[RMDB]
RNA sequence: GGGAACGACUCGAGUAGAGUCGAAAAUAAAGCGUACGAAGAUGGACGUACGCAACAAGUGCGUACAGGAAUCGCACAUCCAGCGCUCUAAGAAGAGCGCAAAAAGAAAUCCUAGAAAGUCACUUUCGAGUGACUAAAAGAAACAACAACAACAAC
Reactivity to DMS in 0.01 (KOAc 150mM, MgCl2 10mM, bicine 150mM(pH8.5), 24C), signal-to-noise 6, nucleotides 027 to 135: u010a040a110a070g010c000g000u000a010c000g000a110a100g010a140u040g010g010a130c010g010u000a010c000g000c010a030a040c190a060a050g010u000g000c000g000u010a070c110a070g010g010a050a080u020c000g000c010a010c000a070u020c020c030a110g000c000g010c000u000c000u000a140a110g030a130a060g010a010g010c000g010c000a000a000a030a060a020g000a040a030a080u000c000c010u000a110g010a070a060a030g010u000c020a000c000u000u000u020c120g000a010g000u000g000a010c000u010a020
Reactivity to 2A3 in 0.01 (KOAc 150mM, MgCl2 10mM, bicine 150mM(pH8.5), 24C), signal-to-noise 6, nucleotides 027 to 135: u080a000a050a000g000c010g000u000a000c010g030a060a050g090a100u180g080g040a020c000g000u000a010c000g020c000a000a010c040a030a020g010u000g000c010g000u030a050c020a040g010g030a010a030u140c000g000c000a000c000a010u020c010c000a010g000c000g000c000u000c000u050a140a120g140a120a010g000a080g000c000g000c000a000a020a000a010a000g040a000a000a000u000c000c000u010a010g080a030a080a000g000u000c000a000c000u020u030u040c110g030a000g000u000g000a000c000u010a040
This 155-nucleotide RNA was probed chemically with DMS and 2A3. The RNA was probed in 150 mM KOAc, 10 mM MgCl2 and 150 mM bicine (pH 8.5) at 24 C.